[RMDB]
RNA sequence: GGGAACGACUCGAGUAGAGUCGAAAACAGGGAAUGCUAUCCAAGGGUUUGCCUGUGGAUGUGGGGCAUCAUAUACAGCUAAUGAUGUCGAAGUCCAAUCAUCUGGCAUGAUUAAGCCAAAUGCUCUGAAGAUCUUAAUGUUCGCAUUAAGAUCUUCAAAAGAAACAACAACAACAAC
Reactivity to DMS in 0.01 (KOAc 150mM, MgCl2 10mM, bicine 150mM(pH8.5), 24C), signal-to-noise 3, nucleotides 027 to 126: c030a080g020g010g000a040a040u000g000c040u000a070u010c180c220a090a110g000g020g030u000u000u000g000c020c030u000g020u000g010g010a070u000g000u010g030g000g020g010c000a000u000c000a000u000a100u000a090c270a110g010c100u000a080a050u000g000a000u000g020u000c030g000a130a250g010u000c010c030a080a110u000c030a030u020c060u000g010g020c010a090u020g000a140u000u010a080a110g000c000c020a030a040a050u010g000c250u000c110u000
Reactivity to 2A3 in 0.01 (KOAc 150mM, MgCl2 10mM, bicine 150mM(pH8.5), 24C), signal-to-noise 4, nucleotides 027 to 126: c000a010g010g020g020a060a040u090g070c040u060a070u140c070c030a050a070g070g000g010u050u060u110g220c010c000u050g020u070g060g010a020u040g050u100g060g180g000g000c000a000u010c000a000u070a010u030a060c060a030g030c060u130a110a010u030g020a010u000g020u010c000g030a080a010g040u000c010c000a010a020u040c010a010u000c020u050g010g000c010a010u050g030a140u220u150a080a010g000c000c000a010a030a020u070g010c020u010c060u120
Source information
An RNA of 177 nucleotides, treated with DMS and 2A3 and read out base by base. The data come from the RNA Mapping Database (RMDB), library 15KREP. For 2A3, 5,220 sequencing reads were counted. 2A3 adducts were read by reverse transcription with SuperScript II with manganese. As a SHAPE reagent, 2A3 marks flexible, mostly unpaired nucleotides at the ribose 2'-OH. For DMS, 2,505 sequencing reads were counted.